This 177-nucleotide RNA was probed chemically with 2A3 and DMS. The DMS profile rests on 1,952 reads. Source: RMDB library OK1LIB, as collected in RNAgym. The 2A3 profile rests on 2,956 reads. For 2A3 the reverse transcriptase was SuperScript II with manganese.
RNA sequence: GGGAACGACUCGAGUAGAGUCGAAAAGUGAUGCCUACAUUGCCGGGUUCAUCGCUGGUCUGGGCUAUGCCUCUGAGUCUGUGGACUCUGCGCUGGCUAAGCGUCAGAACCUGAAGGAUAACAUCCAUCGCUGAUAGGAUUUCGAUCCUAUCAGCGAAAAAGAAACAACAACAACAAC
Reactivity to 2A3 in 0.01 (KOAc 150mM, MgCl2 10mM, bicine 150mM(pH8.5), 24C), signal-to-noise 5, nucleotides 027 to 126: g080u100g040a070u150g030c000c010u040a040c070a240u070u250g100c060c030g000g000g020u000u050c000a030u020c020g000c030u020g010g030u070c020u060g010g030g000c030u070a090u300g040c010c020u070c040u080g000a000g000u000c000u110g200u270g190g020a010c000u020c020u040g030c140g020c110u030g000g010c010u090a180a040g010c000g020u040c090a080g010a020a010c000c000u030g050a020a040g000g000a040u040a060a080c030a070u000c030c000a030
Reactivity to DMS in 0.01 (KOAc 150mM, MgCl2 10mM, bicine 150mM(pH8.5), 24C), signal-to-noise 2, nucleotides 027 to 126: g030u020g010a010u010g000c000c000u010a100c010a120u050u010g000c200c000g040g000g000u000u020c000a070u000c000g020c000u000g030g000u000c030u020g000g050g000c000u000a020u050g020c000c000u050c170u000g000a000g000u000c010u020g000u010g020g000a000c000u030c000u030g010c300g000c110u000g000g000c020u000a000a100g010c010g000u000c130a110g000a000a050c000c000u000g020a160a060g050g000a010u000a090a040c010a300u000c040c000a050